[RMDB]
This 177-nucleotide RNA was probed chemically with DMS and 2A3. It was measured as part of the RMDB library OK2TST. The 2A3 profile rests on 2,807 reads. 2A3 adducts were read by reverse transcription with SuperScript II with manganese. The DMS profile rests on 2,888 reads. The reactions ran in a buffer of 150 mM KOAc, 10 mM MgCl2 and 150 mM bicine (pH 8.5), at 24 C.
RNA sequence: GGGAACGACUCGAGUAGAGUCGAAAAAGGGCGAGGUCGCCUUCCACGCUCACCUGCUGCGGCGACAGGCCGAGGGCCGCAGCGAGGUGCGCCCGCGCCGUCUCCGCCUGGGGCGACCCCGCGCUCACUAGAAUUAGCCAUUCGUGGCUAAUUCUAGAAAAGAAACAACAACAACAAC
Reactivity to DMS in 0.01 (KOAc 150mM, MgCl2 10mM, bicine 150mM(pH8.5), 24C), signal-to-noise 2, nucleotides 027 to 126: a040g000g000g020c000g000a040g010g010u000c000g010c000c020u000u000c080c060a120c230g010c060u000c050a040c030c010u000g020c030u000g010c010g000g000c000g020a110c140a100g010g000c060c050g000a070g000g010g000c020c010g000c010a020g010c030g000a000g010g000u000g020c160g010c010c150c060g010c050g010c070c030g010u000c030u000c040c040g020c030c110u000g010g010g000g000c000g000a030c000c000c030c000g000c010g000c020u000c070a210
Reactivity to 2A3 in 0.01 (KOAc 150mM, MgCl2 10mM, bicine 150mM(pH8.5), 24C), signal-to-noise 2, nucleotides 027 to 126: a000g080g040g000c000g000a010g000g020u010c010g000c000c010u080u000c050c020a050c050g010c000u040c020a040c010c020u030g010c030u020g010c020g020g010c030g130a110c100a080g040g050c050c060g040a110g030g050g020c070c020g010c020a000g020c010g030a010g020g040u000g000c030g030c000c060c000g070c030g010c030c020g120u070c030u020c040c010g010c000c060u040g010g020g010g010c010g010a010c000c000c020c000g060c000g030c010u060c020a050